[RMDB]
RNA sequence: GGGAACGACUCGAGUAGAGUCGAAAAUUAAAAUGUGCGUCCCUCCCGAAGCUGCGCGCUCCGUCGAAGAGGACGACCACAGCCGAUAGAGGACUGACGGUCUUCGGUCAAGGGAAAAAGAAAAAAAUCAAUAAGUCUGGUUCGCCAGACUUAUUGAAAAAGAAACAACAACAACAAC
Reactivity to 2A3 in 0.01 (KOAc 150mM, MgCl2 10mM, bicine 150mM(pH8.5), 24C), signal-to-noise 1, nucleotides 027 to 126: u110u030a000a040a010a150u210g040u030g110c020g000u040c010c010c000u020c000c000c000g050a030a000g020c040u060g040c090g000c040g000c160u000c030c010g090u070c030g000a130a080g040a070g120g010a020c000g020a010c020c020a050c010a010g000c050c010g020a050u100a130g160a030g020g000a050c010u030g070a050c050g000g000u020c090u030u090c000g040g030u060c080a050a040g030g000g030a000a090a010a100a000g030a040a020a000a030a010a010a030
Reactivity to DMS in 0.01 (KOAc 150mM, MgCl2 10mM, bicine 150mM(pH8.5), 24C), signal-to-noise 2, nucleotides 027 to 126: u000u000a050a050a090a080u000g010u000g000c110g010u000c010c010c010u000c040c010c010g000a070a050g010c010u000g020c080g010c090g020c010u010c050c030g000u000c040g000a120a100g010a160g010g000a030c060g010a080c060c000a030c060a010g010c040c020g020a090u000a140g000a060g000g020a040c010u000g010a180c180g010g010u000c000u000u000c010g010g010u000c060a090a120g010g000g000a010a060a050a140a080g030a010a010a040a040a090a090a150